This 207-nucleotide RNA was probed chemically with 2A3.
The data come from the RNA Mapping Database (RMDB), library OK3TST.

RNA sequence: GGGAACGACUCGAGUAGAGUCGAAAACGAUCAGUACGUUCGCGUACUGAUCGAAGCUACUGGAGACAGUAGCAAGUCUAAGACCUUGUUAGGGGGAAACAAGGAAAAAUGGAGGAAGGACGGACCUCCAUACUUAGACAACCUCUAACCGUCCAAAGUGGCCAGUAUGGUUCGCCAUACUGGCCACAAAAGAAACAACAACAACAAC
Reactivity to 2A3 in 0.01 (KOAc 150mM, MgCl2 10mM, bicine 150mM(pH8.5), 24C), signal-to-noise 5, nucleotides 027 to 156: c010g000a000u000c000a000g000u000a010c010g020u030u080c230g010c000g090u000a000c000u000g000a000u000c000g000a000a000g000c000u000a000c000u000g010g030a060g020a050c000a000g000u000a000g000c010a000a030g000u000c000u000a000a030g010a180c000c000u020u020g040u050u210a300g000g000g000g000g040a030a020a000c010a010a000g010g000a060a130a050a030a020u030g000g000a010g020g020a110a250g010g000a000c000g020g040a110c000c000u000c000c000a000u020a020c000u000u000a000g000a000c010a020a080c030c010u110c040u090a020a010c000c000g000u000c000c000a020a010a010

Source information
The reactions ran in a buffer of 150 mM KOAc, 10 mM MgCl2 and 150 mM bicine (pH 8.5), at 24 C. Values are in units of 0.01, from 0 to 300, in steps of 10.